This 177-nucleotide RNA was probed chemically with DMS and 2A3.
The DMS profile rests on 1,404 reads.
The RNA was probed in 150 mM KOAc, 10 mM MgCl2 and 150 mM bicine (pH 8.5) at 24 C.
RNA sequence: GGGAACGACUCGAGUAGAGUCGAAAACAGUUCUGCCCAUCUCUUAGUUUGGUACAUGACAUGGAGUGUCAAGUUCCCAAAGGGAGAAAGGGACUGUGCCUCUGCAUUCUCAUGACAGUUCUGUGGGCAGUACAGGCGCAUUCGUGCGCCUGUACUGAAAAGAAACAACAACAACAAC
Reactivity to DMS in 0.01 (KOAc 150mM, MgCl2 10mM, bicine 150mM(pH8.5), 24C), signal-to-noise 1, nucleotides 027 to 126: c060a040g010u010u010c030u000g010c020c010c020a220u000c000u010c010u000u000a090g000u000u010u010g000g010u000a040c050a140u010g010a020c000a020u010g020g030a150g000u000g000u000c010a050a080g010u000u010c160c000c010a010a030a060g040g000g010a040g030a030a060a070g000g000g010a000c020u000g000u020g010c070c010u000c010u000g000c170a170u030u000c110u020c060a060u010g010a050c000a040g000u000u000c030u000g010u000g010g000g010
Reactivity to 2A3 in 0.01 (KOAc 150mM, MgCl2 10mM, bicine 150mM(pH8.5), 24C), signal-to-noise 1, nucleotides 027 to 126: c000a020g030u030u120c010u020g030c040c010c000a060u030c010u050c000u040u070a110g060u250u050u020g010g000u020a010c020a050u050g020a010c000a010u130g300g210a220g140u010g010u000c020a040a020g020u010u050c050c000c030a020a000a000g050g020g000a010g030a040a040a000g010g020g040a000c010u040g080u110g050c000c010u050c010u050g050c010a140u150u020c050u060c110a110u120g020a020c010a020g030u030u010c020u010g060u100g000g030g000